Conditions: 150 mM KOAc, 10 mM MgCl2 and 150 mM bicine (pH 8.5), 24 C. Chemical mapping of a 207-nucleotide RNA with 2A3 and DMS. 2A3 adducts were read by reverse transcription with SuperScript II with manganese.
RNA sequence: GGGAACGACUCGAGUAGAGUCGAAAAUAAGCAAAAGACAACCACCUUUACCGCUGACAAUAGCGUUAUCCCUCUGCACUUCGGUAAUAUGAGGGCACAGUAAAUCCCGCAAGGAUGAGAAUGUGAUUAAACAGUUACAGCUUCGGCUGUAACUGAACUGAUUCUAUGUCUUCGGACAUAGAAUCAGAAAAGAAACAACAACAACAAC
Reactivity to 2A3 in 0.01 (KOAc 150mM, MgCl2 10mM, bicine 150mM(pH8.5), 24C), signal-to-noise 4, nucleotides 027 to 156: u170a020a010g040c060a060a080a010a010g080a080c040a040a060c070c030a080c040c030u040u090u140a100c060c010g000c030u060g060a100c140a160a160u120a110g010c010g060u070u070a060u090c000c010c000u030c020u030g000c010a020c030u000u100c200g130g040u040a040a010u140a100u300g000a010g000g000g000c000a000c000a000g010u040a000a020a020u000c020c010c000g100c080a030a040g000g010a000u030g010a000g000a020a020u020g030u010g020a020u060u200a110a090a070c010a020g000u000u000a000c000a000g000c000u010u090c200g110g000c000u010g000u000a000a000c000u000g000a010a000
Reactivity to DMS in 0.01 (KOAc 150mM, MgCl2 10mM, bicine 150mM(pH8.5), 24C), signal-to-noise 1, nucleotides 027 to 156: u020a040a050g020c030a030a090a110a070g000a140c000a040a110c040c050a120c080c030u000u000u000a040c050c010g010c000u010g030a170c120a110a090u000a060g020c090g010u040u000a070u020c000c010c000u000c020u000g010c050a020c040u000u010c240g060g020u000a000a190u000a040u000g010a040g030g020g020c090a090c000a120g000u000a090a120a110u000c000c000c000g000c200a060a140g000g000a110u010g030a100g030a120a090u000g000u000g020a180u000u000a050a120a120c020a020g000u000u000a010c000a020g020c000u000u000c300g110g010c000u010g050u000a020a030c000u020g000a040a070
For 2A3, 2,464 sequencing reads were counted. DMS adducts were read by reverse transcription with MarathonRT.